[RMDB]
RNA sequence: GGGAACGACUCGAGUAGAGUCGAAAAGCCGGAGAUCCUUCUCGAGAAUUCGCCUUUUCUUCCUUUCUUCCACCCACUGCUCGAGGAUCUCCUCCCUCCCCUUCGAGGAUUCCCCUGCGACGGGUAGUAAUCCGCUCCUUCGGGAGCGGAAAAAGAAACAACAACAACAAC
Reactivity to 2A3 in 0.01 (KOAc 150mM, MgCl2 10mM, bicine 150mM(pH8.5), 24C), signal-to-noise 2, nucleotides 027 to 129: g130c060c010g030g000a000g000a010u000c000c000u100u110c100u030c060g000a010g000a030a080u130u070c060g040c010c000u030u040u070u000c020u060u030c000c010u080u070u060c030u060u000c030c020a040c020c010c000a030c050u050g020c010u030c020g000a010g000g000a000u040c000u010c030c000u000c000c000c020u040c010c000c000c020u010u020c030g060a060g040g010a030u020u010c020c000c000c000u020g110c050g010a010c010g000g030g000u000a020g000u050a000a060

Structure probing data (2A3) for a 170-nucleotide construct. Values cover nucleotides 27 to 129. Source: RMDB library 15KLIB, as collected in RNAgym. The 2A3 profile rests on 2,977 reads. 2A3 adducts were read by reverse transcription with SuperScript II with manganese.